[RMDB]
RNA sequence: GGGAACGACUCGAGUAGAGUCGAAAAAACGCGUAAGUCGGACGGCGGCCAUGAGUCGCAACGCAAAGCCGCGGCAAGUGGAGUUAGCGAGAAGAGACUAGGCUUUGGUUUCUUCAAGUGAAGCGGUAAAAGGUUCGAGACUUCGGUCUCGAACCAAGUGAGCUAUAAAGUUCGCUUUAUAGCUCACAAAAGAAACAACAACAACAAC
Reactivity to 2A3 in 0.01 (KOAc 150mM, MgCl2 10mM, bicine 150mM(pH8.5), 24C), signal-to-noise 3, nucleotides 027 to 156: a010a030c070g030c020g020u040a070a060g100u090c050g100g050a080c040g060g000c000g000g000c000c030a280u280g010a040g030u000c000g000c020a020a020c020g000c030a080a070a020g010c020c010g010c030g000g040c040a080a050g020u090g140g060a120g050u120u190a030g020c010g010a050g000a060a000g010a000g010a000c010u030a050g080g100c050u110u100u110g010g010u010u000u000c000u000u000c020a030a010g010u040g050a060a010g000c010g020g020u070a030a060a030a140g000g010u000u000c000g000a000g000a000c000u020u050c180g010g000u000c010u000c000g000a000a000c000c000a000a010
Reactivity to DMS in 0.01 (KOAc 150mM, MgCl2 10mM, bicine 150mM(pH8.5), 24C), signal-to-noise 2, nucleotides 027 to 156: a030a020c010g010c020g000u000a130a230g000u020c010g020g000a190c060g000g020c030g020g000c000c040a110u000g000a290g020u000c000g010c000a030a060c020g010c020a060a140a160g020c000c060g050c000g030g020c040a030a110g020u000g020g000a180g040u000u000a290g000c020g000a300g000a020a020g000a030g010a050c010u020a070g000g020c140u010u000u010g030g000u010u000u000c020u010u000c010a010a240g000u010g000a110a140g000c000g010g000u000a040a050a110a220g000g000u000u020c010g000a030g010a020c020u010u020c300g150g030u000c000u030c010g000a010a000c020c010a010a030

The record gives the reactivity of an RNA of 207 nucleotides to 2A3 and DMS. The data come from the RNA Mapping Database (RMDB), library M2RFPK. For 2A3 the reverse transcriptase was SuperScript II with manganese. DMS adducts were read by reverse transcription with MarathonRT. Values cover nucleotides 27 to 156.